[RMDB]
RNA sequence: GGGAACGACUCGAGUAGAGUCGAAAAUAGUACACUUCGGUGUACUAAAAAACCGUAGGUAACCAAGAUCUAUGAAGUAUGGUGUUUGUUCGAAAGAGUGAUACCAUAUGGAGAUCGACGUUACCUAAACGGAAAAAGCGCUGUUUCGACAGCGCAAUGUUUUAGGCUGAUUCGUCAGCCUAAAACAAAAAGAAACAACAACAACAAC
Reactivity to 2A3 in 0.01 (KOAc 150mM, MgCl2 10mM, bicine 150mM(pH8.5), 24C), signal-to-noise 3, nucleotides 027 to 156: u080a010g010u010a010c000a000c040u060u080c300g030g000u000g000u000a000c000u000a000a030a000a040a010a000c000c000g020u020a030g000g010u000a000a000c010c020a120a020g000a010u000c010u030a300u140g010a010a000g020u010a010u010g010g040u020g100u020u040u120g090u020u000c020g020a130a080a050g000a050g000u020g020a000u010a030c010c000a000u000a000u030g010g010a010g000a010u010c000g010a010c000g000u000u000a000c000c000u000a010a020a000c010g000g060a050a030a070a080a090g000c010g000c010u000g080u030u110u140c250g080a000c000a000g000c000g000c010a000a030
Reactivity to DMS in 0.01 (KOAc 150mM, MgCl2 10mM, bicine 150mM(pH8.5), 24C), signal-to-noise 1, nucleotides 027 to 156: u010a010g000u000a020c010a020c000u010u000c300g030g010u000g030u000a050c000u010a010a080a100a120a080a120c000c000g000u000a060g040g000u000a030a010c000c030a040a300g000a020u000c000u000a080u040g030a120a220g020u000a020u000g000g000u000g030u000u000u000g030u010u000c000g030a210a080a210g060a060g050u000g000a050u000a000c010c000a020u000a020u000g000g010a010g000a020u000c000g000a260c300g000u000u000a000c000c000u000a010a000a070c030g050g000a050a120a030a110a100g020c000g040c000u020g040u000u010u010c230g010a060c000a030g000c000g060c020a010a000

Structure probing data (2A3 and DMS) for a 207-nucleotide construct. 2A3 adducts were read by reverse transcription with SuperScript II with manganese. The data come from the RNA Mapping Database (RMDB), library RNAMAK. Reactivities are given for positions 27 through 156. The 2A3 profile rests on 2,475 reads.